An RNA of 207 nucleotides, treated with 2A3 and DMS and read out base by base. Values cover nucleotides 27 to 156. Conditions: 150 mM KOAc, 10 mM MgCl2 and 150 mM bicine (pH 8.5), 24 C. DMS adducts were read by reverse transcription with MarathonRT. For 2A3 the reverse transcriptase was SuperScript II with manganese.
RNA sequence: GGGAACGACUCGAGUAGAGUCGAAAAGGCUAGGUGGUAUUCCGGUGUGGGAUACUUGGUAAUAUGUAACGCUAAUUGCAUAAGAUUGUAGGACGGAGUUUACAGUCUUGGUUUUUAUAAACCUGAAAAAAGGAAUUACACUUCGGUGUAAUUCCAAGUUGAAACUGAAGUUCGCUUCAGUUUCAACAAAAGAAACAACAACAACAAC
Reactivity to 2A3 in 0.01 (KOAc 150mM, MgCl2 10mM, bicine 150mM(pH8.5), 24C), signal-to-noise 4, nucleotides 027 to 156: g070g010c060u050a030g000g060u030g030g030u050a040u050u040c030c030g090g080u150g030u110g040g060g000a030u050a060c020u040u080g030g000u070a050a050u050a100u120g060u030a070a030c050g000c110u080a110a070u110u090g000c000a020u030a080a050g020a040u030u060g020u050a020g020g060a030c060g050g020a050g010u030u070u020a010c010a000g010u010c000u030u040g010g010u030u000u000u050u010a160u140a080a040a020c000c010u040g040a070a000a000a000a010a060g000g000a000a000u000u000a000c000a000c010u030u110c210g060g000u000g000u000a000a000u000u000c000c000a000a000
Reactivity to DMS in 0.01 (KOAc 150mM, MgCl2 10mM, bicine 150mM(pH8.5), 24C), signal-to-noise 2, nucleotides 027 to 156: g010g000c020u000a070g030g010u000g000g030u010a050u000u000c070c020g000g010u000g040u010g000g000g000a080u000a020c040u040u030g010g020u010a070a170u000a050u010g020u010a040a120c100g030c080u000a060a110u000u010g000c010a100u000a050a090g000a090u000u000g020u000a060g010g000a130c050g040g010a180g010u000u010u000a010c050a040g000u000c020u000u010g020g000u000u020u020u010u000a090u010a080a040a100c000c010u000g000a010a000a050a080a140a180g000g000a020a010u000u000a010c000a010c000u000u000c300g080g010u000g010u000a020a010u000u000c010c010a000a050